[RMDB]
RNA sequence: GGGAACGACUCGAGUAGAGUCGAAAAGUGGACGCCACGGAUCGCCACGCAACUGUCCGUGCUGGCUUGCGCGGCCUUUAUCUAUGUCACCGCCGAAAUCCUGCCAGUGGGCGCGCUGUCGGCGAUAGCAAUAAGGGUCAUUCGUGACCCUUAUUGCAAAAGAAACAACAACAACAAC
Reactivity to DMS in 0.01 (KOAc 150mM, MgCl2 10mM, bicine 150mM(pH8.5), 24C), signal-to-noise 4, nucleotides 027 to 126: g010u000g000g000a110c170g020c050c020a100c060g020g020a010u000c060g000c030c010a030c060g040c030a100a080c070u030g020u010c000c040g010u050g000c040u010g000g000c040u020u010g000c220g030c030g000g000c110c050u000u060u000a090u030c130u040a040u030g020u010c080a240c070c050g000c010c060g010a050a060a130u020c050c050u000g000c000c010a030g040u010g000g000g020c010g010c110g020c000u010g000u020c060g000g000c020g000a030u000a050
Reactivity to 2A3 in 0.01 (KOAc 150mM, MgCl2 10mM, bicine 150mM(pH8.5), 24C), signal-to-noise 7, nucleotides 027 to 126: g080u070g020g060a130c080g080c050c010a030c020g050g020a020u010c010g010c010c010a010c010g010c010a060a080c090u130g030u060c010c000g050u090g080c030u030g010g010c000u060u120g050c060g000c020g080g050c010c010u140u190u090a210u070c100u050a080u150g140u110c040a020c040c040g000c010c000g070a060a060a070u140c030c020u030g010c010c010a020g020u170g020g010g020c020g000c020g000c040u100g030u090c080g010g000c030g010a030u020a050